Record summary:
The record gives the reactivity of an RNA of 177 nucleotides to DMS and 2A3. The reactions ran in a buffer of 150 mM KOAc, 10 mM MgCl2 and 150 mM bicine (pH 8.5), at 24 C. Reactivities are given for positions 27 through 126. The data come from the RNA Mapping Database (RMDB), library OK1LIB.

RNA sequence: GGGAACGACUCGAGUAGAGUCGAAAAGUGCAGUCAGGGCCCGAACGGGCCGCUCAUCGAGUUCUGUGCACCUAUCGGUCAUCGCGACGCCGAUGCCGGUGAGUUGGAAUCCUGGCAACCGCAGAAGUACAAAGCCUACGUUCGCGUAGGCUUUGUAAAAAGAAACAACAACAACAAC
Reactivity to DMS in 0.01 (KOAc 150mM, MgCl2 10mM, bicine 150mM(pH8.5), 24C), signal-to-noise 2, nucleotides 027 to 126: g000u030g010c020a030g030u010c050a130g060g000g000c010c010c030g040a100a110c150g000g000g020c000c000g000c010u030c020a110u000c070g000a080g050u020u000c030u000g020u020g020c000a090c040c050u000a070u000c010g010g010u030c040a070u010c020g010c120g030a080c260g010c070c020g020a020u000g020c040c000g010g020u000g010a070g000u000u030g030g030a120a070u010c030c000u020g000g000c060a080a060c090c130g000c030a090g010a070a110g000
Reactivity to 2A3 in 0.01 (KOAc 150mM, MgCl2 10mM, bicine 150mM(pH8.5), 24C), signal-to-noise 3, nucleotides 027 to 126: g040u020g050c040a010g020u040c040a120g020g000g000c000c000c000g030a120a170c190g000g000g030c020c000g030c000u000c000a140u050c020g030a040g070u060u020c030u090g150u100g040c040a030c030c000u050a040u030c000g010g030u090c000a040u030c090g040c050g190a200c110g090c120c010g040a010u030g010c000c000g000g010u050g010a030g000u150u240g040g010a020a080u030c000c000u000g000g000c020a070a050c040c000g000c040a070g020a210a000g020